The record gives the reactivity of an RNA of 207 nucleotides to DMS and 2A3. Values cover nucleotides 27 to 156. It was measured as part of the RMDB library OK3TST.
[RMDB]
RNA sequence: GGGAACGACUCGAGUAGAGUCGAAAACAACAGUCUGAUCUCGUACCACGCCUCACGAAACGACGUUUAAUGUUAGGCACUGAGUGAAAGUCAUACUUAUACGUGCUGGACGUGGGUUGUACACGUGUUAGCUAACCGGUGAUUGAAAAAUUCCGCCUAGUAACAACAGAUUCGUCUGUUGUUACUAAAAAGAAACAACAACAACAAC
Reactivity to DMS in 0.01 (KOAc 150mM, MgCl2 10mM, bicine 150mM(pH8.5), 24C), signal-to-noise 5, nucleotides 027 to 156: c040a100a120c050a090g020u000c030u010g010a110u000c070u000c000g040u010a110c050c020a060c040g020c010c000u000c080a300c080g000a090a100a150c040g010a080c020g010u000u000u000a080a080u000g030u000u000a120g020g000c010a100c040u060g010a060g040u020g000a140a090a100g010u000c050a120u000a060c040u000u010a050u000a080c070g010u000g010c050u000g040g000a030c020g020u040g010g010g000u000u000g030u000a130c070a050c070g020u010g010u000u000a050g030c040u000a100a110c040c020g000g030u000g000a090u000u000g000a050a050a060a090a250u000u000c030c010g010c300c090
Reactivity to 2A3 in 0.01 (KOAc 150mM, MgCl2 10mM, bicine 150mM(pH8.5), 24C), signal-to-noise 8, nucleotides 027 to 156: c050a000a010c010a020g040u000c020u040g040a060u020c010u020c070g040u080a100c030c030a070c100g020c010c010u050c010a010c020g060a070a050a010c120g180a040c060g040u030u050u130a190a130u170g030u030u050a040g010g000c030a010c100u070g050a020g070u080g050a080a060a010g030u030c020a030u060a120c020u130u100a050u030a140c070g040u040g040c030u050g020g050a030c000g010u010g000g060g010u010u060g010u040a020c020a010c020g020u020g070u080u040a010g000c050u070a070a070c020c020g040g030u070g030a100u100u120g100a070a070a010a020a040u150u020c030c010g010c010c040